Chemical mapping of a 207-nucleotide RNA with 2A3 and DMS. The data come from the RNA Mapping Database (RMDB), library OK3TST. Conditions: 150 mM KOAc, 10 mM MgCl2 and 150 mM bicine (pH 8.5), 24 C. For 2A3, 3,036 sequencing reads were counted.
[RMDB]
RNA sequence: GGGAACGACUCGAGUAGAGUCGAAAAAUCUUCAGCGCCUGCGUGUUUUUCAUGUGGUGUCCUGGUGACGUAGUUCGCUGGACAUCACCGUCGGAAACCCUGCGAUACCCCGGCGAGAGUCUGCAGCAGGUUAGCCUAUCACCUGAUUCUAGCGAAGCAUCGAACAGGUAUUCGUACCUGUUCGAUGAAAAGAAACAACAACAACAAC
Reactivity to 2A3 in 0.01 (KOAc 150mM, MgCl2 10mM, bicine 150mM(pH8.5), 24C), signal-to-noise 4, nucleotides 027 to 156: a000u050c050u130u110c030a020g010c020g020c010c020u040g010c060g180u090g030u010u160u020u090u120c070a050u100g010u010g010g000u010g000u000c020c040u150g100g010u030g000a010c100g090u100a090g070u170u010c010g000c010u010g000g000a010c000a000u000c000a000c000c010g010u020c010g000g000a080a070a080c030c010c030u090g060c040g030a020u080a130c050c000c000c010g010g010c010g000a140g000a010g100u040c050u120g010c020a020g010c000a000g000g020u010u050a010g000c000c020u090a100u140c040a080c060c000u060g030a180u060u030c020u030a020g060c060g050a060a010g070
Reactivity to DMS in 0.01 (KOAc 150mM, MgCl2 10mM, bicine 150mM(pH8.5), 24C), signal-to-noise 1, nucleotides 027 to 156: a080u000c040u020u010c030a090g010c030g040c070c030u010g030c010g030u010g020u000u000u000u000u000c030a190u010g020u000g040g000u000g030u000c030c000u030g090g030u010g040a040c010g020u010a110g010u010u010c060g030c010u000g020g000a030c030a010u000c000a020c010c040g040u000c070g010g000a100a070a110c050c040c020u000g040c100g030a170u000a110c050c010c000c010g000g000c000g010a100g000a170g020u000c060u000g000c260a150g040c000a040g040g020u000u010a140g020c020c070u000a070u010c050a060c000c020u000g010a140u000u000c040u010a030g010c060g010a140a110g010